The record gives the reactivity of an RNA of 177 nucleotides to 2A3 and DMS. The reactions ran in a buffer of 150 mM KOAc, 10 mM MgCl2 and 150 mM bicine (pH 8.5), at 24 C. The 2A3 profile rests on 8,496 reads. For DMS, 5,299 sequencing reads were counted.
[RMDB]
RNA sequence: GGGAACGACUCGAGUAGAGUCGAAAAGAUAUGGAAGCUGUGUGGGAGCGUCCAUGUCGGAAACGACAUGACGCGACGAUCACACAAGGCUUCCUAAGUCAAAGAAUUUCACUUCGGUGAAAUUCAACAUUGCUGUACAGUUCGCUGUACAGCAAUGAAAAGAAACAACAACAACAAC
Reactivity to 2A3 in 0.01 (KOAc 150mM, MgCl2 10mM, bicine 150mM(pH8.5), 24C), signal-to-noise 3, nucleotides 027 to 126: g000a010u060a010u090g010g010a020a020g010c090u080g040u000g010u000g060g010g030a070g020c020g010u060c180c040a010u010g000u000c000g000g000a000a020a010c000g010a010c000a000u010g000a000c000g000c010g050a120c020g010a030u040c000a000c000a000c010a010a080g300g000c010u010u000c000c000u000a030a000g000u000c010a020a060a290g020a020a010u020u030u000c000a010c000u080u190c300g190g000u020g000a010a000a000u010u000c010a000a010
Reactivity to DMS in 0.01 (KOAc 150mM, MgCl2 10mM, bicine 150mM(pH8.5), 24C), signal-to-noise 4, nucleotides 027 to 126: g000a030u000a140u010g000g000a030a000g020c050u010g020u010g030u000g000g000g010a050g010c000g000u000c160c140a000u000g000u010c010g020g010a030a040a070c000g020a010c000a000u000g010a030c010g020c010g000a050c250g000a060u000c010a020c000a000c000a110a130g020g020c020u000u000c000c000u000a000a090g010u000c010a150a150a170g000a020a000u010u000u000c000a000c000u000u010c240g030g020u010g000a010a010a000u000u000c000a120a200